[RMDB]
RNA sequence: GGGAACGACUCGAGUAGAGUCGAAAAGAUAUGGAGAGGGUGAACUACUUGACCGUUCGGAAACGAACGUGUCAAGCACCUCCCCACCUCCUAAGUCAAAACAAGAUCCCCUUCGGGGGAUCUUGAACAAUACAAUCUUGUUCGCAAGAUUGUAUUGAAAAGAAACAACAACAACAAC
Reactivity to DMS in 0.01 (KOAc 150mM, MgCl2 10mM, bicine 150mM(pH8.5), 24C), signal-to-noise 8, nucleotides 027 to 126: g000a070u000a140u010g010g010a010g010a140g000g010g010u000g010a080a090c170u010a150c010u000u000g000a020c000c010g010u000u000c000g000g000a090a070a140c010g010a010a000c000g010u010g010u000c000a000a000g000c020a020c060c030u000c030c010c000c020a100c150c050u000c010c000u000a080a160g010u000c090a090a090a150a220c010a000a010g000a010u000c000c000c000c000u000u010c200g020g020g000g000g010a000u000c000u000u000g000a070a120
Reactivity to 2A3 in 0.01 (KOAc 150mM, MgCl2 10mM, bicine 150mM(pH8.5), 24C), signal-to-noise 4, nucleotides 027 to 126: g010a020u070a020u100g010g020a030g050a120g040g030g020u060g030a060a050c070u230a040c000u300u000g010a000c000c000g000u000u010c000g010g020a030a030a030c010g000a000a000c000g020u080g010u030c000a000a000g000c010a010c000c000u050c020c010c010c010a230c030c000u000c000c000u030a070a020g070u060c040a010a020a170a250c010a070a010g000a010u000c000c000c000c050u020u200c250g060g000g000g000g000a010u010c000u000u000g000a000a000
An RNA of 177 nucleotides, treated with DMS and 2A3 and read out base by base. DMS adducts were read by reverse transcription with MarathonRT. The 2A3 profile rests on 18,817 reads.